Chemical mapping of a 177-nucleotide RNA with DMS and 2A3. The reactions ran in a buffer of 150 mM KOAc, 10 mM MgCl2 and 150 mM bicine (pH 8.5), at 24 C.

RNA sequence: GGGAACGACUCGAGUAGAGUCGAAAACAAUUGAGCGUCGCACACACACAGACUAAGUCUGACACUGACAGAGCCUAAACCGCUCAGUCAGUGUGCGAGAUAUCGUUCUUAAUGUGAGCAGAGGAAAAGUUAACGACUGAUUCGUCAGUCGUUAACUAAAAGAAACAACAACAACAAC
Reactivity to DMS in 0.01 (KOAc 150mM, MgCl2 10mM, bicine 150mM(pH8.5), 24C), signal-to-noise 4, nucleotides 027 to 126: c070a090a090u000u010g010a060g020c040g000u000c000g010c030a090c040a050c070a070c140a140c170a020g000a020c010u000a080a190g010u000c010u000g000a090c040a030c050u010g020a020c010a110g000a010g000c000c010u010a040a070a140c300c300g000c000u000c000a040g010u000c020a000g020u010g020u000g000c020g010a030g020a060u000a140u010c060g000u010u000c020u010u000a090a110u000g010u010g010a100g010c010a050g020a060g000g000a040a080a050
Reactivity to 2A3 in 0.01 (KOAc 150mM, MgCl2 10mM, bicine 150mM(pH8.5), 24C), signal-to-noise 3, nucleotides 027 to 126: c020a050a180u060u180g020a040g020c030g080u030c030g010c000a010c010a000c000a000c000a000c010a050g010a010c020u090a210a000g020u000c010u020g020a010c010a000c040u000g000a000c010a040g000a010g000c000c000u030a060a040a060c020c020g000c010u000c020a000g000u010c000a000g010u010g010u000g000c010g040a000g010a010u110a020u140c050g050u110u020c020u040u120a150a110u110g010u030g060a040g000c090a040g050a090g050g060a070a090a080
The DMS profile rests on 2,680 reads.